[RMDB]
RNA sequence: GGGAACGACUCGAGUAGAGUCGAAAAGCCGCGAAGAGGCAGGCGGAGCUGUGGGCGGCGAUGCUGGGCUACUUUGUGUACGACACAGUCGGCGCCAUGCGCAUUGCGCAGUUCUUCGACAUGGUCGCACGUGACGUUGGUUCGCCAACGUCACGUGAAAAGAAACAACAACAACAAC
Reactivity to 2A3 in 0.01 (KOAc 150mM, MgCl2 10mM, bicine 150mM(pH8.5), 24C), signal-to-noise 2, nucleotides 027 to 126: g050c030c000g000c020g050a090a030g030a040g130g140c050a020g020g000c040g010g000a030g000c020u080g020u140g110g090g020c020g000g050c010g010a030u090g020c010u030g020g150g100c050u090a060c020u060u170u250g150u100g070u060a070c060g030a020c060a010c020a110g040u020c010g000g110c010g000c000c040a080u040g050c010g000c190a300u100u300g020c040g000c000a000g040u180u000c000u000u000c000g000a020c050a090u180g040g010u120c070g010
Reactivity to DMS in 0.01 (KOAc 150mM, MgCl2 10mM, bicine 150mM(pH8.5), 24C), signal-to-noise 1, nucleotides 027 to 126: g000c010c000g000c020g040a060a050g010a160g020g000c030a060g020g000c040g000g000a160g020c030u000g000u000g010g020g020c010g000g020c040g010a040u000g010c120u000g030g010g000c030u000a080c030u000u000u000g030u010g000u020a040c100g030a100c020a130c010a020g030u000c030g000g000c050g020c160c080a090u000g000c040g010c010a210u000u010g020c000g020c010a020g000u000u010c050u000u010c000g000a080c020a000u020g010g010u000c060g000